[RMDB]
RNA sequence: GGGAACGACUCGAGUAGAGUCGAAAAAAGAGGGCUUUCGGCGAUAUUGACAGGCAGCUGCAUUUGUGCCCGGAAAGCGCGAAGUGUAAUCAAUGAGUAAAGCAAAUCUCAAGCCAUAAAUUGGUAACUGAUUCUUCAAUUUCGAUUGAAGAAUCAGAAAAGAAACAACAACAACAAC
Reactivity to DMS in 0.01 (KOAc 150mM, MgCl2 10mM, bicine 150mM(pH8.5), 24C), signal-to-noise 5, nucleotides 027 to 126: a080a080g000a060g000g000g000c020u000u010u000c020g000g020c060g010a110u020a050u030u020g010a120c130a100g000g000c060a050g010c050u010g000c020a060u000u000u020g000u010g000c010c000c030g010g030a060a060a090g020c070g020c050g020a050a070g010u000g000u010a090a070u030c070a070a120u010g000a070g010u010a050a060a080g020c130a040a050a080u010c020u000c040a080a080g010c000c010a040u010a040a060a100u030u010g000g010u000a080a170
Reactivity to 2A3 in 0.01 (KOAc 150mM, MgCl2 10mM, bicine 150mM(pH8.5), 24C), signal-to-noise 7, nucleotides 027 to 126: a000a000g150a040g010g030g000c030u030u010u020c050g060g000c020g060a050u050a090u170u150g080a060c030a030g040g090c010a050g020c020u020g000c010a010u000u050u140g060u070g020c000c030c000g010g020a070a060a010g020c050g000c030g060a060a040g050u040g030u140a030a060u070c060a010a090u110g020a010g050u100a060a070a030g050c040a020a110a150u060c020u000c030a050a030g010c000c010a040u110a110a120a050u180u090g010g000u010a030a030
Description: Chemical mapping of a 177-nucleotide RNA with DMS and 2A3. The reactions ran in a buffer of 150 mM KOAc, 10 mM MgCl2 and 150 mM bicine (pH 8.5), at 24 C. Reactivities are rounded to 0.1 and cut off at 0 and 3.